The data come from the RNA Mapping Database (RMDB), library OK2TST. This 177-nucleotide RNA was probed chemically with 2A3 and DMS. The DMS profile rests on 4,157 reads. The RNA was probed in 150 mM KOAc, 10 mM MgCl2 and 150 mM bicine (pH 8.5) at 24 C.

RNA sequence: GGGAACGACUCGAGUAGAGUCGAAAAAGCACAAUUAUUUCUCUGUUACGCAGAUGGGGAAACAGACCUAGGCAGGGAUAUAGUGACCUGCCCACAGGUCUAACAGCAUUUGAGUGAUAAUUAGAACGAUAAAUAGCUUCUUCGGAAGCUAUUUAUCAAAAGAAACAACAACAACAAC
Reactivity to 2A3 in 0.01 (KOAc 150mM, MgCl2 10mM, bicine 150mM(pH8.5), 24C), signal-to-noise 5, nucleotides 027 to 126: a000g170c130a100c070a080a080u110u040a050u040u120u000c000u000c010u020g060u070u070a030c040g020c030a010g020a070u060g010g000g040g120a040a100a030c060a020g000a000c010c000u020a030g000g010c000a010g020g010g070a040u140a040u070a270g270u180g110a050c000c010u010g010c010c000c000a100c010a000g000g000u000c000u000a020a000c010a010g080c000a010u010u030u040g030a030g010u020g030a020u020a100a050u110u120a070g100a130a030c070
Reactivity to DMS in 0.01 (KOAc 150mM, MgCl2 10mM, bicine 150mM(pH8.5), 24C), signal-to-noise 5, nucleotides 027 to 126: a110g020c160a080c170a070a050u010u010a080u010u000u000c010u000c040u010g010u010u000a020c060g000c040a020g010a030u000g000g010g010g010a080a100a140c230a020g010a010c000c010u000a080g000g020c010a020g000g000g010a190u000a170u010a140g020u010g010a160c000c000u000g000c000c000c050a040c210a020g000g020u000c000u000a020a080c100a140g020c020a030u000u000u000g000a020g010u020g000a030u010a030a130u010u010a090g010a080a150c240